Annotation: An RNA of 177 nucleotides, treated with DMS and 2A3 and read out base by base. The 2A3 profile rests on 7,747 reads. Reactivities are given for positions 27 through 126. It was measured as part of the RMDB library OK2TRN.
[RMDB]
RNA sequence: GGGAACGACUCGAGUAGAGUCGAAAAUAUAACACCACUUAUAGCAUCUCUGUUUACCUUCUGAACAGUAUAAUUAUUAGCAUCCUUCAAUGUUAGUCUGCUUUAUUAUUGGUAUAGGUAUUGGCACCACAAGACUAACAUUCGUGUUAGUCUUGUGAAAAGAAACAACAACAACAAC
Reactivity to DMS in 0.01 (KOAc 150mM, MgCl2 10mM, bicine 150mM(pH8.5), 24C), signal-to-noise 7, nucleotides 027 to 126: u010a080u010a100a100c110a110c040c030a060c100u000u000a070u000a060g010c040a060u000c090u010c040u000g010u010u000u000a080c100c100u000u000c100u000g000a040a050c040a040g000u010a060u000a080a060u010u000a060u000u000a050g010c020a030u000c070c050u000u000c110a060a070u000g000u000u000a050g000u000c100u000g000c050u000u010u000a030u020u000a090u000u000g000g010u000a050u000a050g000g010u000a070u000u000g010g010c090a100c160
Reactivity to 2A3 in 0.01 (KOAc 150mM, MgCl2 10mM, bicine 150mM(pH8.5), 24C), signal-to-noise 6, nucleotides 027 to 126: u100a000u030a060a030c030a030c030c000a040c040u070u070a070u070a140g050c010a040u020c040u000c000u070g050u060u090u040a090c020c010u130u090c050u100g030a050a020c000a020g070u040a030u040a140a080u100u130a050u080u060a020g000c000a020u020c020c000u070u050c040a050a120u080g040u100u030a030g020u000c030u020g030c040u110u100u040a100u150u030a070u050u120g020g000u070a040u060a070g020g000u020a040u080u080g050g000c030a020c060